[RMDB]
Structure probing data (2A3) for a 177-nucleotide construct. High 2A3 reactivity points to a flexible backbone, as in loops and unpaired stretches. The 2A3 profile rests on 562 reads.
RNA sequence: GGGAACGACUCGAGUAGAGUCGAAAAUGGUAGUAGGGCUAUCGGGUGCAUGUUGAAAUUUCGAAGCCCGUGGUCACGGCUCUUUCCAUGCUCCGUAGGACUAACUCUUGCUCUCACGGGCUGUAUCGCGGUGGGGGAGAUUCGUCUCCCCCACCGCAAAAGAAACAACAACAACAAC
Reactivity to 2A3 in 0.01 (KOAc 150mM, MgCl2 10mM, bicine 150mM(pH8.5), 24C), signal-to-noise 1, nucleotides 027 to 126: u040g020g010u000a010g010u050a020g070g170g060c000u000a040u230c000g010g000g010u130g000c030a010u010g060u020u130g140a060a090a150u070u110u030c070g040a030a030g000c040c000c030g000u010g040g020u040c040a000c040g000g040c010u030c000u040u060u040c000c000a000u130g010c000u000c010c050g040u010a070g000g130a040c010u060a120a000c000u000c000u130u110g000c040u000c060u040c000a040c000g000g000g000c000u090g090u060a030u090c080